[RMDB]
An RNA of 177 nucleotides, treated with DMS and 2A3 and read out base by base. The reactions ran in a buffer of 150 mM KOAc, 10 mM MgCl2 and 150 mM bicine (pH 8.5), at 24 C. DMS adducts were read by reverse transcription with MarathonRT.

RNA sequence: GGGAACGACUCGAGUAGAGUCGAAAAUCAGCGGAACCGGAAGUGCUGCGUGGGAGGCGGCUGUUGCCAACCUCACUUCUCCCGGAGACGUGCACCUGACCUGUGUGAACGGGUACUUCGGAGAGCGUCAAGCACAAAGGUUCGCCUUUGUGCUUGAAAAAGAAACAACAACAACAAC
Reactivity to DMS in 0.01 (KOAc 150mM, MgCl2 10mM, bicine 150mM(pH8.5), 24C), signal-to-noise 5, nucleotides 027 to 126: u020c090a120g010c030g020g010a170a160c030c000g020g010a120a080g000u000g000c070u010g010c100g020u000g010g000g010a190g020g040c300g010g010c040u010g000u000u020g020c030c030a070a190c040c010u000c040a110c070u000u000c020u000c030c010c030g010g000a060g010a160c020g000u010g000c030a070c020c050u000g000a070c120c060u010g010u000g000u010g000a130a040c000g010g000g030u000a070c090u010u010c040g010g010a070g000a080g010c150g010
Reactivity to 2A3 in 0.01 (KOAc 150mM, MgCl2 10mM, bicine 150mM(pH8.5), 24C), signal-to-noise 2, nucleotides 027 to 126: u080c010a000g000c000g040g030a000a050c000c010g050g020a070a060g070u070g010c090u010g050c070g060u050g030g050g030a080g010g020c000g010g050c010u220g070u250u230g060c000c000a000a020c010c010u040c000a080c000u070u010c040u000c030c010c020g000g010a020g020a020c010g040u050g000c040a030c000c010u050g090a110c010c050u040g040u040g030u030g120a030a010c000g000g010g040u100a170c030u010u030c030g020g020a060g000a000g010c040g080